[RMDB]
RNA sequence: GGGAACGACUCGAGUAGAGUCGAAAAGAUAUGGAUGACAUAGCUAGAGGGUCGGAAACGACCCAUCUUGGACCUAUGAUCAUCCUAAGUCAAAACUGAUCUUAUUCGUUCGCGAAUAAGAUCAGAACCAGUACACGAUGUUCGCAUCGUGUACUGGAAAAGAAACAACAACAACAAC
Reactivity to 2A3 in 0.01 (KOAc 150mM, MgCl2 10mM, bicine 150mM(pH8.5), 24C), signal-to-noise 1, nucleotides 027 to 126: g030a010u040a010u110g000g020a000u000g010a000c000a000u010a000g040c010u000a000g010a030g010g060g000u000c000g000g020a030a040a030c000g020a010c010c040c000a050u020c010u000u040g060g080a140c000c030u010a020u030g070a300u030c000a000u000c000c000u000a050a000g040u020c030a010a010a160a210c010u000g000a010u000c010u000u020a010u020u000c000g040u000u050c280g020c020g240a010a000u000a010a010g000a020u030c000a000g000a010a000
Reactivity to DMS in 0.01 (KOAc 150mM, MgCl2 10mM, bicine 150mM(pH8.5), 24C), signal-to-noise 2, nucleotides 027 to 126: g020a120u000a300u000g000g000a020u000g010a040c010a010u000a000g000c080u000a030g000a070g000g030g020u000c000g030g000a040a050a240c000g000a020c010c010c000a010u000c000u000u000g010g040a080c300c000u000a000u000g000a190u000c020a010u000c000c000u000a010a050g000u000c050a100a070a130a130c010u010g000a000u000c010u000u000a000u000u000c010g030u000u020c200g020c000g000a010a010u000a000a010g000a000u000c000a000g000a060a160

Conditions: 150 mM KOAc, 10 mM MgCl2 and 150 mM bicine (pH 8.5), 24 C.
Structure probing data (2A3 and DMS) for a 177-nucleotide construct.
It was measured as part of the RMDB library TTRDEL.